Structure probing data (2A3) for a 207-nucleotide construct. The RNA was probed in 150 mM KOAc, 10 mM MgCl2 and 150 mM bicine (pH 8.5) at 24 C. The data come from the RNA Mapping Database (RMDB), library OK3TST.
[RMDB]
RNA sequence: GGGAACGACUCGAGUAGAGUCGAAAAAACCCCAUCUCUCGUCUACGGACGGGUACCUCCUCCUCCGUACUGAGGCUUGAUAACUACUUGAUAGUUGCCAACCUUGGCUCUUGAAAUACCCGGGGAGUGGGGCCUCCAGCAAAGCACAAACAACAUCGAUGUCUGCCAUAUUCGUAUGGCAGACAUCAAAAGAAACAACAACAACAAC
Reactivity to 2A3 in 0.01 (KOAc 150mM, MgCl2 10mM, bicine 150mM(pH8.5), 24C), signal-to-noise 1, nucleotides 027 to 156: a000a000c030c020c000c000a060u000c030u010c000u000c030g070u100c030u150a090c120g060g020a020c020g010g000g000u080a160c000c000u030c000c000u000c000c000u020c010c010g000u010a030c030u010g000a010g000g020c050u000u000g010a000u080a060a000c030u060a020c000u030u100g110a140u220a020g060u030u070g000c010c000a020a020c000c000u000u000g090g000c090u010c010u180u160g100a200a170a080u030a080c090c000c000g030g000g000g000a060g020u130g030g020g000g010c000c010u030c030c000a050g030c090a060a180a040g070c020a000c170a210a130a000c010a140a020c030a080u300c130